Source: RMDB library TTRDEL, as collected in RNAgym. This 177-nucleotide RNA was probed chemically with 2A3 and DMS. The RNA was probed in 150 mM KOAc, 10 mM MgCl2 and 150 mM bicine (pH 8.5) at 24 C. For DMS, 3,184 sequencing reads were counted. 2A3 adducts were read by reverse transcription with SuperScript II with manganese.
[RMDB]
RNA sequence: GGGAACGACUCGAGUAGAGUCGAAAAGAUAUGGAUUUCCCAUCGUUCGAUGAAAUCGGAAACGAUGGAGAACAGAUGGGAGAAUCCUAAGUCAAAAGAGAGUAUCGACUUCGGUCGAUACUCUCAAGAUCUAAACCAGGUUCGCCUGGUUUAGAUCAAAAGAAACAACAACAACAAC
Reactivity to 2A3 in 0.01 (KOAc 150mM, MgCl2 10mM, bicine 150mM(pH8.5), 24C), signal-to-noise 1, nucleotides 027 to 126: g000a000u090a070u170g010g000a000u020u000u010c000c010c020a000u000c000g020u000u040c050g060a300u050g050a040a030a010u020c020g010g020a080a010a050c020g000a010u020g000g010a040g000a010a010c070a200g020a010u000g000g000g000a040g040a000a020u040c010c000u010a110a030g130u060c030a050a030a180a000g000a000g000a010g000u030a000u010c010g000a010c010u100u170c300g000g000u000c000g000a030u010a000c010u000c000u010c000a000a000
Reactivity to DMS in 0.01 (KOAc 150mM, MgCl2 10mM, bicine 150mM(pH8.5), 24C), signal-to-noise 3, nucleotides 027 to 126: g020a020u000a300u010g020g000a010u000u000u000c000c000c010a000u000c000g000u000u000c000g010a100u010g000a110a120a020u010c000g000g010a160a070a230c010g000a010u000g000g020a060g000a010a000c010a100g020a010u000g000g010g010a020g010a030a020u010c000c000u010a050a140g020u000c020a060a060a110a130g010a010g010a010g000u000a010u000c000g010a020c000u000u030c210g030g000u000c010g010a000u000a000c010u000c000u000c000a000a040